[RMDB]
RNA sequence: GGGAACGACUCGAGUAGAGUCGAAAAUCUCCAGUUUCUCGAUCUCUUUGGUUGUACAAAGUGGUAUGGCACUUCUCAAUAGUCUGCUCAUACCGCUUUUCGGCUAAAGGAAUCGAGUCUUUGGUGUCAUUAAUAACGGACUGGGUUCGCCCAGUCACCUAUACAGAGUCUUCGGACUCUGUAUAGGAAAAGAAACAACAACAACAAC
Reactivity to DMS in 0.01 (KOAc 150mM, MgCl2 10mM, bicine 150mM(pH8.5), 24C), signal-to-noise 2, nucleotides 027 to 156: u000c020u000c030c150a160g000u000u000u010c000u010c010g030a020u000c010u000c000u000u000u000g020g020u010u000g000u000a100c110a020a020a040g030u000g010g020u000a030u000g040g010c020a010c030u000u010c050u000c080a150a150u010a300g010u010c030u000g030c000u010c000a010u000a020c020c000g000c020u000u000u000u000c030g020g020c010u000a040a010a020g010g000a030a010u000c020g010a020g000u000c140u000u000u020g010g020u000g020u000c050a200u010u000a070a140u010a090a150c110g020g020a030c000u000g000g010g040u000u000c300g030c010c010c010a020g020u000c020a000
Reactivity to 2A3 in 0.01 (KOAc 150mM, MgCl2 10mM, bicine 150mM(pH8.5), 24C), signal-to-noise 5, nucleotides 027 to 156: u050c020u000c000c000a020g010u010u050u020c000u000c000g010a010u000c030u010c010u030u000u000g010g020u050u030g050u080a060c100a090a020a010g000u000g010g010u000a000u000g000g000c010a020c040u090u040c090u030c160a110a140u060a110g050u030c070u080g020c040u030c230a000u000a000c000c000g000c000u000u000u000u010c000g000g000c000u010a000a000a010g020g000a010a010u000c000g000a000g000u010c010u020u030u020g020g000u050g060u070c070a090u110u270a120a110u160a150a040c090g050g000a010c000u010g000g000g050u060u070c150g090c010c000c000a000g010u010c000a000
An RNA of 207 nucleotides, treated with DMS and 2A3 and read out base by base. 2A3 is a SHAPE reagent: it acylates the 2'-hydroxyl of flexible nucleotides of all four kinds. 2A3 adducts were read by reverse transcription with SuperScript II with manganese. It was measured as part of the RMDB library RFM130.